An RNA of 207 nucleotides, treated with 2A3 and read out base by base. For 2A3 the reverse transcriptase was SuperScript II with manganese. It was measured as part of the RMDB library OK3TST.
RNA sequence: GGGAACGACUCGAGUAGAGUCGAAAAAUCGGAAGAAUCUUCAGAGAAUUUGAAGCCGGAAGGCUCAAACGCAAAGUAUGAGGAUGAACAAUUACUGAAGAGUUCAUCUGAGGACAUGAUAGUAGAGGAGUCCAAGCUGACUAACGCUGUGACAAGGGCACGCGAUCGAAUUCGUUCGAUCGCGUGCAAAAGAAACAACAACAACAAC
Reactivity to 2A3 in 0.01 (KOAc 150mM, MgCl2 10mM, bicine 150mM(pH8.5), 24C), signal-to-noise 1, nucleotides 027 to 156: a010u070c000g050g000a010a000g030a040a000u000c000u070u070c040a010g030a020g020a200a070u100u070u080g000a100a000g000c000c010g060g050a050a040g010g000c010u000c030a000a020a030c020g020c050a000a080a040g020u090a100u090g020a010g030g000a020u050g010a010a000c010a040a140u140u050a100c040u060g080a070a020g050a070g050u020u000c010a030u010c010u020g000a070g030g050a040c010a000u120g040a050u100a080g080u070a070g040a110g030g010a040g010u020c000c000a030a020g040c010u010g130a080c030u080a110a000c140g020c050u020g020u070g060a030c130a200a090g150g000